[RMDB]
RNA sequence: GGGAACGACUCGAGUAGAGUCGAAAAGCUGAUUGGGAAGAUUUACCCUUCGGCGGCGGCGGUAGGUGCAGAUUGCACUUUGGCUCAUGCUGAUUGAAAUUUUUUGACCUGUUGCGGUCCUUGCGGGAUUGGCAUUAAGCUUCGGCUUAAUGCCAAUAAAAGAAACAACAACAACAAC
Reactivity to DMS in 0.01 (KOAc 150mM, MgCl2 10mM, bicine 150mM(pH8.5), 24C), signal-to-noise 1, nucleotides 027 to 126: g000c020u000g000a100u020u000g000g010g010a110a100g000a100u000u000u000a080c060c010c030u000u000c020g020g060c020g000g060c130g020g020c060g010g000u000a030g020g020u010g010c020a070g010a160u020u000g020c050a040c030u000u000u000g000g040c010u000c070a300u000g030c000u000g000a070u010u040g000a090a090a040u000u000u000u000u000u000g000a230c030c020u000g000u000u000g010c050g010g000u000c010c050u000u050g000c040g000g000g010